[RMDB]
RNA sequence: GGGAACGACUCGAGUAGAGUCGAAAAGAUAUGGAUCUACAUGACAUGCUACCGUUCGGAAACGAACGAAGUAGCAACAGCAUGAAUAGAUCCUAAGUCAAAAUCGACUGGGGUUCGCCCCAGUCGACAGAUUAGCCUACUUCGGUAGGCUAAUCUGAAAAGAAACAACAACAACAAC
Reactivity to DMS in 0.01 (KOAc 150mM, MgCl2 10mM, bicine 150mM(pH8.5), 24C), signal-to-noise 2, nucleotides 027 to 126: g010a000u000a040u000g000g010a010u020c010u000a030c010a000u000g020a030c080a220u030g000c000u000a000c010c000g000u000u000c010g010g000a040a000a040c000g010a010a010c000g000a030a110g030u010a000g000c000a080a050c240a130g010c000a010u010g000a160a100u000a010g000a010u000c000c000u000a000a070g000u010c010a130a070a120a280u000c000g000a000c010u000g010g000g020g020u000u010c300g000c000c000c000c000a000g010u000c000g010a010
Reactivity to 2A3 in 0.01 (KOAc 150mM, MgCl2 10mM, bicine 150mM(pH8.5), 24C), signal-to-noise 1, nucleotides 027 to 126: g010a000u040a010u020g020g000a000u000c000u000a020c000a020u010g060a080c110a240u300g000c000u020a000c000c000g010u000u000c000g000g000a030a020a020c010g010a000a020c000g020a210a080g000u000a000g000c000a090a000c040a020g060c000a000u030g040a300a110u020a010g000a000u000c000c000u000a000a000g010u060c000a040a040a020a300u020c020g010a010c020u000g030g050g020g020u080u050c300g130c020c000c010c020a000g000u000c000g000a000
The record gives the reactivity of an RNA of 177 nucleotides to DMS and 2A3. Source: RMDB library TTRDES, as collected in RNAgym. The DMS profile rests on 1,572 reads. For 2A3 the reverse transcriptase was SuperScript II with manganese.